RNA sequence: GGGAACGACUCGAGUAGAGUCGAAAAUCGGCGAUCAGAUGGUUCUUCGACGAGAAGUAUGUGUAGGCCGUCGCCGGGGCUACCUUGGCGCGGGCCGCCACCAGGCGCACCGUCAGGUCGGCGUAUGUCUGCAAGGUAGAUUCGUCUACCUUGCAGAAAAAGAAACAACAACAACAAC
Reactivity to DMS in 0.01 (KOAc 150mM, MgCl2 10mM, bicine 150mM(pH8.5), 24C), signal-to-noise 3, nucleotides 027 to 126: u010c010g010g000c010g020a030u010c020a050g020a030u010g000g000u000u000c020u000u000c020g010a140c230g000a250g000a020a040g000u010a070u020g020u010g000u000a090g010g010c010c010g020u000c010g020c000c000g010g000g020g000c190u000a040c010c000u000u010g020g000c000g000c110g000g010g000c050c010g010c120c020a030c080c230a160g020g000c170g010c170a060c010c010g010u000c010a030g030g000u010c020g000g000c010g000u010a050u010g010